RNA sequence: GGGAACGACUCGAGUAGAGUCGAAAAAAAGACGAGGUUGCCGAUCGGUAUGGAUGCCACCGUGACGGCUCAAUCACACAAGUGCCAACGAUAACGAGGCGCUCGCUAUUGCUGCGUAACUGACGGCUAGAUACAGCCAGGUUCGCCUGGCUGUAAACCUCCCUCAAAAGUUCGCUUUUGAGGGAGGAAAAGAAACAACAACAACAAC
Reactivity to 2A3 in 0.01 (KOAc 150mM, MgCl2 10mM, bicine 150mM(pH8.5), 24C), signal-to-noise 1, nucleotides 027 to 156: a000a000a000g120a000c010g020a040g050g000u300u070g000c020c030g070a150u000c070g020g020u090a060u110g030g130a030u190g040c050c070a010c040c050g040u060g020a030c030g020g040c000u000c010a000a020u100c020a030c010a050c000a150a020g000u010g060c030c000a060a090c040g090a120u020a150a080c020g000a090g080g000c000g020c030u000c000g050c040u020a070u130u220g060c020u000g030c020g020u020a050a140c010u050g040a040c070g000g020c020u000a000g020a070u060a030c000a000g000c010c000a000g000g030u010u010c030g110c090c000u010g000g000c000u000g000u000a000a000a000

Source: RMDB library M2RFPK, as collected in RNAgym. This 207-nucleotide RNA was probed chemically with 2A3. For 2A3 the reverse transcriptase was SuperScript II with manganese.